[RMDB]
RNA sequence: GGGAACGACUCGAGUAGAGUCGAAAAGGGCAGUGCUGGUGCAAGUAUCUGAAGACGGUGACGAGCGUCCUAUCGCCUUCGUCUCAAAGAAGCUGAACAAGCUCAGCGCAAUUAUACAGUCACCGAGGUGGAUUACGGAGUUCGCUCCGUAAUCCACAAAAGAAACAACAACAACAAC
Reactivity to DMS in 0.01 (KOAc 150mM, MgCl2 10mM, bicine 150mM(pH8.5), 24C), signal-to-noise 1, nucleotides 027 to 126: g000g000g000c020a070g020u000g070c000u000g000g000u030g010c110a030a030g090u050a050u010c040u050g000a080a090g010a080c150g000g000u030g000a000c040g000a000g050c070g000u000c000c050u000a150u070c070g000c030c000u000u000c040g000u000c030u000c070a070a120a160g000a100a300g020c000u000g010a130a190c180a070a200g010c130u000c000a050g000c020g010c060a020a000u050u000a110u040a030c210a010g000u040c000a010c000c000g030a100g040
Reactivity to 2A3 in 0.01 (KOAc 150mM, MgCl2 10mM, bicine 150mM(pH8.5), 24C), signal-to-noise 2, nucleotides 027 to 126: g070g010g000c080a070g020u060g000c000u100g020g050u000g030c120a060a070g020u000a060u030c040u110g090a120a000g040a000c020g000g020u020g000a010c030g050a040g090c040g030u060c000c000u110a100u150c000g000c020c000u040u070c000g050u050c000u000c070a100a100a020g170a030a000g040c000u060g020a080a060c140a270a000g030c010u000c040a000g000c040g010c010a000a000u130u060a060u030a150c080a000g060u080c010a040c020c000g010a020g050
Chemical mapping of a 177-nucleotide RNA with DMS and 2A3. The data come from the RNA Mapping Database (RMDB), library OK1LIB. Values cover nucleotides 27 to 126. For DMS, 1,556 sequencing reads were counted. The 2A3 profile rests on 1,208 reads. For DMS the reverse transcriptase was MarathonRT.